[RMDB]
RNA sequence: GGGAACGACUCGAGUAGAGUCGAAAAGUAAUAGAUAACUGGAUGCAGCGUAGGAGUCAACGCAUAUCCAGUACGAAUGGUACCUGUAAAUAAAAUAUGGCUCCUAGUACAAGUACCAACAGAAGGAUAAGCGAUGGUGAUGUCAAUCACAUUUGCACAUAGCCAUUAUCUUCGGAUAAUGGCUAUGAAAAGAAACAACAACAACAAC
Reactivity to 2A3 in 0.01 (KOAc 150mM, MgCl2 10mM, bicine 150mM(pH8.5), 24C), signal-to-noise 5, nucleotides 027 to 156: g030u050a010a160u060a110g090a080u070a130a040c000u000g020g010a010u040g090c200a110g000c250g000u000a010g000g000a000g000u000c000a000a000c000g010c010a010u030a010u130c000c000a000g010u010a010c020g060a080a150u070g000g000u010a010c000c000u020g020u020a020a140a120u150a040a130a090a030u140a040u050g010g000c010u000c010c000u020a030g030u010a010c000a020a020g000u000a010c020c020a010a040c040a050g130a110a060g080g040a040u080a170a000g010c020g050a030u060g050g120u060g010a040u010g050u150c080a100a020u040c010a020c010a050u040u050u260g000c010a010
Reactivity to DMS in 0.01 (KOAc 150mM, MgCl2 10mM, bicine 150mM(pH8.5), 24C), signal-to-noise 3, nucleotides 027 to 156: g020u000a090a090u000a080g000a100u000a110a070c010u000g000g030a040u000g010c110a070g000c020g040u010a090g000g010a030g020u010c020a090a080c020g010c010a110u010a080u000c010c010a030g020u000a070c080g020a080a090u010g010g010u000a040c000c010u010g030u000a010a110a180u020a100a050a090a110u000a100u000g020g010c000u010c000c010u000a140g000u000a040c020a030a010g000u000a030c020c000a060a150c110a110g000a090a080g000g010a100u010a050a140g010c010g020a060u000g030g010u000g020a070u020g010u010c150a060a160u000c070a050c030a090u000u010u000g060c040a260
An RNA of 207 nucleotides, treated with 2A3 and DMS and read out base by base. The DMS profile rests on 5,305 reads. The reactions ran in a buffer of 150 mM KOAc, 10 mM MgCl2 and 150 mM bicine (pH 8.5), at 24 C. For DMS the reverse transcriptase was MarathonRT. It was measured as part of the RMDB library OK3TST. For 2A3 the reverse transcriptase was SuperScript II with manganese.